[RMDB]
RNA sequence: GGGAACGACUCGAGUAGAGUCGAAAACGUUUGCAUGAUUCAUUUCCUCCAGUUCAUCAUAGGUCAAUGAGAACUCGGGAAGCCAUUCCAUCAAGUGGUCAGCAAAUUGAGUAUAUCGCCAUUGACCGUUCUGCAAGGUAUUCGUACCUUGCAGAACAAAAGAAACAACAACAACAAC
Reactivity to 2A3 in 0.01 (KOAc 150mM, MgCl2 10mM, bicine 150mM(pH8.5), 24C), signal-to-noise 2, nucleotides 027 to 126: c020g010u030u110u090g070c080a130u110g040a130u110u160c040a040u090u040u040c010c010u030c030c010a030g010u000u030c030a200u000c020a020u190a070g060g000u020c020a040a000u030g020a010g000a050a010c020u020c070g030g000g060a020a010g000c040c000a050u170u050c030c020a070u080c030a200a090g090u010g050g000u050c010a000g010c040a010a080a090u120u100g020a030g030u060a070u000a030u270c080g020c090c000a010u010u000g040a040c020c010
Reactivity to DMS in 0.01 (KOAc 150mM, MgCl2 10mM, bicine 150mM(pH8.5), 24C), signal-to-noise 2, nucleotides 027 to 126: c150g010u000u010u000g020c020a060u000g040a080u000u010c070a080u000u000u000c010c010u000c060c090a080g000u000u020c040a080u000c040a020u000a170g020g010u010c010a050a120u010g000a110g000a020a030c010u000c250g000g020g030a120a140g030c050c070a110u000u010c050c100a100u010c210a080a040g010u020g000g000u010c100a110g020c000a020a020a080u000u010g000a080g000u000a100u030a130u000c080g020c030c030a130u000u000g000a000c020c010
Conditions: 150 mM KOAc, 10 mM MgCl2 and 150 mM bicine (pH 8.5), 24 C. The record gives the reactivity of an RNA of 177 nucleotides to 2A3 and DMS. Reactivities are given for positions 27 through 126. For DMS the reverse transcriptase was MarathonRT. The DMS profile rests on 1,200 reads. For 2A3, 1,814 sequencing reads were counted.